[RMDB]
Source information: Structure probing data (DMS and 2A3) for a 207-nucleotide construct. The DMS profile rests on 11,339 reads. The RNA was probed in 150 mM KOAc, 10 mM MgCl2 and 150 mM bicine (pH 8.5) at 24 C.
RNA sequence: GGGAACGACUCGAGUAGAGUCGAAAACUCGCAUCAUUGGAUAACUGACGAGUAGGUCUUCUCAGUUGCCGCAGUGAAGGUCUCGCAGAUGUUCGAACUCACUCAUUAGGUCGGAGUGAGGGAUGGCUCACUCACCACGGAUGGGAGUGAGAUCUAAGACUAUAAAAGGAUUCGUCCUUUUAUAGUCAAAAGAAACAACAACAACAAC
Reactivity to DMS in 0.01 (KOAc 150mM, MgCl2 10mM, bicine 150mM(pH8.5), 24C), signal-to-noise 4, nucleotides 027 to 156: c020u000c030g010c060a130u000c050a170u010u010g000g010a090u000a030a090c050u000g010a070c070g020a050g000u020a090g030g010u000c050u000u000c040u000c030a120g010u000u000g020c030c020g020c060a120g030u000g010a050a080g010g010u000c010u000c070g000c040a060g000a140u010g030u000u000c040g010a080a150c000u000c010a030c010u000c000a130u000u000a080g030g020u010c110g010g000a040g020u000g010a000g020g020g000a100u000g000g010c020u000c010a020c030u000c010a110c020c040a280c090g010g000a190u000g010g010g020a070g010u000g010a040g000a040u000c020u000a080a300
Reactivity to 2A3 in 0.01 (KOAc 150mM, MgCl2 10mM, bicine 150mM(pH8.5), 24C), signal-to-noise 9, nucleotides 027 to 156: c020u020c020g050c040a130u080c020a040u100u200g070g030a080u090a170a070c020u040g100a100c040g020a040g040u090a090g060g100u030c030u070u020c030u030c030a110g040u130u160g060c050c030g020c070a030g010u020g100a060a010g020g010u010c010u020c060g000c020a010g040a100u090g060u060u070c020g040a040a020c010u000c010a010c000u000c010a070u090u240a090g110g050u130c130g080g010a000g000u000g000a000g010g010g020a080u120g060g010c010u010c000a000c000u000c000a300c040c010a060c100g290g030a120u220g060g010g000a010g000u010g000a000g000a000u000c000u040a110a030